[RMDB]
Chemical mapping of a 177-nucleotide RNA with DMS. The RNA was probed in 150 mM KOAc, 10 mM MgCl2 and 150 mM bicine (pH 8.5) at 24 C. The data come from the RNA Mapping Database (RMDB), library TTRINS. Reactivities are rounded to 0.1 and cut off at 0 and 3.
RNA sequence: GGGAACGACUCGAGUAGAGUCGAAAAGAUAUGGAAUCGGGAGAAGGCUGUGAACAUUGGCAACAGCAUGAGUUCGGAAACGAACUACAUGACAUGCCAAUGUUCACAGCCUUUCGAUUCCUAAGUCGACUAGUAGUACCUUCGGGUACUACUAGUCAAAAGAAACAACAACAACAAC
Reactivity to DMS in 0.01 (KOAc 150mM, MgCl2 10mM, bicine 150mM(pH8.5), 24C), signal-to-noise 2, nucleotides 027 to 126: g000a100u010a300u000g020g000a010a000u000c020g020g020g070a300g010a030a030g020g010c000u010g020u000g000a010a010c010a000u000u000g010g020c000a040a090c170a110g000c000a020u020g010a070g000u010u000c000g000g010a130a090a270c020g010a010a010c010u000a050c010a020u000g000a050c080a290u000g000c000c010a020a010u000g000u000u000c010a010c010a020g000c000c000u000u000u000c000g000a010u000u000c000c000u000a040a080g010u000c110